[RMDB]
RNA sequence: GGGAACGACUCGAGUAGAGUCGAAAACAAAUCCGUUCGCGGAUUUGAAAAAGCGUACUACAAUCAUCCAGCUCCUCCCCACCAAGUCUCCCAAAUAGGAGACUUGAGGGAGAACUACUGGGUUGUAUCGCAAAAAAUCCUACGUUCGCGUAGGAAAGAUUUAACUCAUGUUCGCAUGAGUUAAAUCAAAAGAAACAACAACAACAAC
Reactivity to DMS in 0.01 (KOAc 150mM, MgCl2 10mM, bicine 150mM(pH8.5), 24C), signal-to-noise 1, nucleotides 027 to 156: c040a040a020a000u010c010c000g020u000u000c210g080c020g010g000a000u020u000u020g000a080a130a080a140a150g010c040g020u000a080c060u000a040c010a070a020u000c050a110u000c050c000a020g000c060u010c120c010u000c050c000c000c020a200c140c000a040a020g020u000c010u000c000c010c010a100a180a210u010a020g040g000a040g000a020c000u000u010g000a040g010g020g020a010g010a040a010c040u000a040c010u000g000g010g030u000u000g010u000a040u000c040g000c050a000a050a020a090a080a180u000c010c000u000a000c010g030u000u010c300g020c050g050u000a020g010g000a030a050a070
Reactivity to 2A3 in 0.01 (KOAc 150mM, MgCl2 10mM, bicine 150mM(pH8.5), 24C), signal-to-noise 3, nucleotides 027 to 156: c000a000a010a000u000c010c000g030u050u040c260g030c010g140g000a020u000u020u040g110a130a070a010a020a010g050c030g060u090a090c040u020a020c010a120a100u150c030a090u050c080c030a020g020c050u020c000c010u030c000c000c000c000a080c030c010a010a000g000u000c000u030c000c030c020a160a260a060u250a130g010g010a010g000a000c000u000u000g000a010g000g000g000a000g000a010a010c080u240a060c010u020g010g050g000u000u010g000u000a060u300c110g000c000a110a080a000a000a000a050u020c020c000u000a020c010g040u060u100c300g000c020g090u000a010g010g000a020a020a010
An RNA of 207 nucleotides, treated with DMS and 2A3 and read out base by base. The data come from the RNA Mapping Database (RMDB), library RNAMAK. The reactions ran in a buffer of 150 mM KOAc, 10 mM MgCl2 and 150 mM bicine (pH 8.5), at 24 C.